[RMDB]
RNA sequence: GGGAACGACUCGAGUAGAGUCGAAAAGAUAUGGAAGUAGAAUUCGACGAUCGAAUGGUAUCGGAAACGAUAUUUCGGGAGAAUCUACUUCCUAAGUCAAAGCGACGAAGCUUCGGCUUCGUCGCAAUCAAAUAUAACACUUCGGUGUUAUAUUUGAAAAAGAAACAACAACAACAAC
Reactivity to 2A3 in 0.01 (KOAc 150mM, MgCl2 10mM, bicine 150mM(pH8.5), 24C), signal-to-noise 2, nucleotides 027 to 126: g000a000u020a000u040g000g000a000a030g010u020a020g020a090a130u040u010c040g180a290c010g000a300u000c000g010a000a030u120g080g010u070a010u020c000g000g000a000a000a000c000g000a010u010a040u020u000u000c010g010g000g010a040g020a000a000u030c000u010a000c000u010u000c000c000u020a000a000g000u010c010a010a150a090g030c020g020a020c010g010a010a000g010c000u090u180c300g170g000c020u000u000c050g140u000c020g020c000a010a000
Reactivity to DMS in 0.01 (KOAc 150mM, MgCl2 10mM, bicine 150mM(pH8.5), 24C), signal-to-noise 2, nucleotides 027 to 126: g000a010u000a020u010g000g010a010a010g000u000a010g000a050a060u000u010c010g000a100c300g000a050u010c000g010a020a020u020g030g010u000a000u000c000g010g010a010a000a010c000g020a010u000a000u000u010u000c010g000g030g000a020g000a060a020u000c000u000a010c000u000u010c000c000u000a000a070g000u000c000a090a150a190g010c030g020a010c010g010a030a010g010c020u000u020c280g020g010c000u000u000c000g030u010c000g040c000a020a040
Source: RMDB library TTRDES, as collected in RNAgym. An RNA of 177 nucleotides, treated with 2A3 and DMS and read out base by base. For 2A3 the reverse transcriptase was SuperScript II with manganese. The RNA was probed in 150 mM KOAc, 10 mM MgCl2 and 150 mM bicine (pH 8.5) at 24 C. For DMS the reverse transcriptase was MarathonRT. Values cover nucleotides 27 to 126.